This 177-nucleotide RNA was probed chemically with 2A3.

[RMDB]
RNA sequence: GGGAACGACUCGAGUAGAGUCGAAAAGUGCCGGCGACCCCGUACGUCAUUGCCGACAUCGACCCGUUGCUAGCCGACACCCACGCCUUCGAAGAACUCCGAAUGCUAAGCCUUUUGCCUUCGCGGGGCAAUGCGCCCGUUUCGACGGGCGCAUUGCAAAAGAAACAACAACAACAAC
Reactivity to 2A3 in 0.01 (KOAc 150mM, MgCl2 10mM, bicine 150mM(pH8.5), 24C), signal-to-noise 1, nucleotides 027 to 126: g070u040g000c010c000g010g010c000g060a180c000c010c040c000g130u070a000c000g060u110c020a110u000u060g260c040c000g000a010c010a040u130c040g090a080c000c000c000g040u070u060g040c020u000a000g000c000c000g000a000c000a090c040c000c000a010c040g030c010c000u060u000c000g070a110a030g040a120a030c000u000c040c030g000a070a060u000g040c060u060a040a010g030c050c010u010u140u060u210g000c000c110u040u300c060g000c120g000g010g000

2A3 adducts were read by reverse transcription with SuperScript II with manganese.